[RMDB]
RNA sequence: GGGAACGACUCGAGUAGAGUCGAAAAUAAUCGUAGCCGAUCCCCUAAGGCCCGGCGAACACGUUUCAACCUCGACAACUAUAUCGUAAUCGCGCGCAGUCAGGGCUGCAAAACUGCUCCUUACACCGAUGAUCACCCAAUUCGUUGGGUGAUCAUCAAAAGAAACAACAACAACAAC
Reactivity to 2A3 in 0.01 (KOAc 150mM, MgCl2 10mM, bicine 150mM(pH8.5), 24C), signal-to-noise 1, nucleotides 027 to 126: u120a010a060u140c020g040u070a030g030c050c010g030a100u070c010c020c000c020u010a030a080g070g000c000c060c000g000g000c000g010a050a020c060a000c030g020u050u050u080c050a070a030c030c010u050c040g040a010c010a140a110c040u100a080u030a020u300c040g050u140a090a030u030c030g000c010g040c000g000c050a000g010u020c010a040g070g090g040c030u000g070c000a000a090a040a000c040u030g010c000u000c030c000u020u010a020c050a020c140c030
Reactivity to DMS in 0.01 (KOAc 150mM, MgCl2 10mM, bicine 150mM(pH8.5), 24C), signal-to-noise 1, nucleotides 027 to 126: u010a060a060u030c070g050u000a020g040c000c000g010a100u010c030c000c010c170u010a130a220g000g000c000c030c050g000g000c050g010a050a100c090a080c060g000u010u010u000c090a080a200c080c010u000c040g030a050c110a030a180c120u000a130u000a110u000c020g010u000a010a060u000c060g000c060g000c050g010c030a110g010u000c050a020g030g010g000c040u000g000c090a020a050a120a080c080u010g010c000u000c030c020u000u010a090c260a080c130c060
Record summary:
The record gives the reactivity of an RNA of 177 nucleotides to 2A3 and DMS. For 2A3 the reverse transcriptase was SuperScript II with manganese. The RNA was probed in 150 mM KOAc, 10 mM MgCl2 and 150 mM bicine (pH 8.5) at 24 C. Reactivities are given for positions 27 through 126. The 2A3 profile rests on 1,077 reads. It was measured as part of the RMDB library OK2TST. The DMS profile rests on 669 reads.